This 177-nucleotide RNA was probed chemically with 2A3 and DMS.
It was measured as part of the RMDB library OK2TRN.
The DMS profile rests on 4,573 reads.

RNA sequence: GGGAACGACUCGAGUAGAGUCGAAAAGGUGCUGCGCGCGCAUGUGGAUGAGGAGUCGGCCAGCGAAGUGCUGCAGGACUUGUAUGCGGCUCACCCCGAAAACGAACAGGUCGAGCAGGCGCUGUCGCGCCUUAGGAGUCUUCGGACUCCUAAGGCGAAAAGAAACAACAACAACAAC
Reactivity to 2A3 in 0.01 (KOAc 150mM, MgCl2 10mM, bicine 150mM(pH8.5), 24C), signal-to-noise 3, nucleotides 027 to 126: g020g000u040g040c040u020g010c100g000c030g000c020g030c040a060u160g040u100g120g060a140u090g060a080g100g030a030g050u040c040g030g040c050c030a010g000c030g040a110a010g080u090g080c010u040g000c020a030g000g140a000c020u020u000g020u060a120u130g040c010g030g000c030u040c030a120c000c000c000c010g070a100a090a030a040c040g020a030a020c020a030g010g010u050c030g040a050g050c100a070g140g050c050g010c080u090g110u190c030g010
Reactivity to DMS in 0.01 (KOAc 150mM, MgCl2 10mM, bicine 150mM(pH8.5), 24C), signal-to-noise 4, nucleotides 027 to 126: g000g000u000g010c050u000g010c050g010c090g020c080g010c070a050u010g010u000g010g020a110u000g000a150g020g000a080g010u010c040g010g020c070c030a090g010c040g010a090a080g000u000g020c010u000g010c030a110g010g010a020c020u000u000g020u010a080u010g010c010g000g000c030u000c140a100c100c070c020c040g010a050a050a090a130c100g010a100a050c030a040g000g010u010c030g000a190g010c070a070g020g000c020g000c030u000g000u010c060g010

Record summary: The reactions ran in a buffer of 150 mM KOAc, 10 mM MgCl2 and 150 mM bicine (pH 8.5), at 24 C.